Overview:
The record gives the reactivity of an RNA of 177 nucleotides to 2A3 and DMS.
RNA sequence: GGGAACGACUCGAGUAGAGUCGAAAAAGUAGUAGCGGUGACUACGGUCACCGCUACUACAAGGUAAUGAUGACCCCAGGUGAUUCUGAGUGUCUCGCUGACGCCAUCACCGCAGCGCGCUGAUCAAACUCAGGUAUCUCUUCGGAGAUACCUGAGUAAAAGAAACAACAACAACAAC
Reactivity to 2A3 in 0.01 (KOAc 150mM, MgCl2 10mM, bicine 150mM(pH8.5), 24C), signal-to-noise 1, nucleotides 027 to 126: a000g000u000a000g000u000a000g080c050g000g000u040g040a010c000u010a020c210g010g000u020c000a000c000c000g000c000u000a000c000u000a000c000a000a000g000g000u040a040a020u130g090a040u090g120a160c020c000c010c020a010g000g090u110g040a100u200u060c020u100g050a030g180u030g020u060c020u020c020g040c090u090g010a050c040g020c020c020a010u110c030a000c010c020g000c010a060g050c050g030c000g050c020u010g000a150u140c070a150a010
Reactivity to DMS in 0.01 (KOAc 150mM, MgCl2 10mM, bicine 150mM(pH8.5), 24C), signal-to-noise 1, nucleotides 027 to 126: a120g010u000a000g000u020a020g080c000g030g040u000g050a000c000u000a110c270g020g050u000c000a000c000c000g000c000u000a000c000u030a000c000a050a020g020g000u010a080a110u090g000a170u000g000a040c020c000c000c030a080g000g010u020g000a050u030u010c100u030g000a130g040u010g010u010c030u000c180g020c140u000g030a030c000g000c030c010a070u000c050a040c260c030g030c130a050g000c020g000c080g020c040u020g010a030u000c050a050a140

For 2A3 the reverse transcriptase was SuperScript II with manganese. Conditions: 150 mM KOAc, 10 mM MgCl2 and 150 mM bicine (pH 8.5), 24 C. Values cover nucleotides 27 to 126. It was measured as part of the RMDB library RFM100. DMS adducts were read by reverse transcription with MarathonRT.